Annotation:
An RNA of 177 nucleotides, treated with DMS and read out base by base. Source: RMDB library OK1LIB, as collected in RNAgym. The reactions ran in a buffer of 150 mM KOAc, 10 mM MgCl2 and 150 mM bicine (pH 8.5), at 24 C. Reactivities are given for positions 27 through 126.

RNA sequence: GGGAACGACUCGAGUAGAGUCGAAAAAUAUGUCAGUCCUCCUUGUAAGAGGAUCUAGGACGUAGAGAGGGUGGGUCAGAGCGCCGAUGCCCUAGAUCAGGCGCGCGAGAAGUUAUGGGAAGGACUAGACUGUUCCUUCGUUCGCGGAGGGACAGUCAAAAGAAACAACAACAACAAC
Reactivity to DMS in 0.01 (KOAc 150mM, MgCl2 10mM, bicine 150mM(pH8.5), 24C), signal-to-noise 4, nucleotides 027 to 126: a060u010a000u010g000u000c020a110g000u000c000c000u010c000c020u010u080g010u040a090a070g000a010g000g000a000u000c010u010a010g000g000a000c000g000u000a000g000a000g020a180g000g000g010u010g000g000g010u010c120a100g010a110g000c000g030c000c000g000a040u010g000c060c080c060u020a070g000a050u010c040a120g030g000c010g030c010g020c120g000a100g000a300a300g000u000u050a270u000g000g000g000a300a300g000g000a070c260u000a220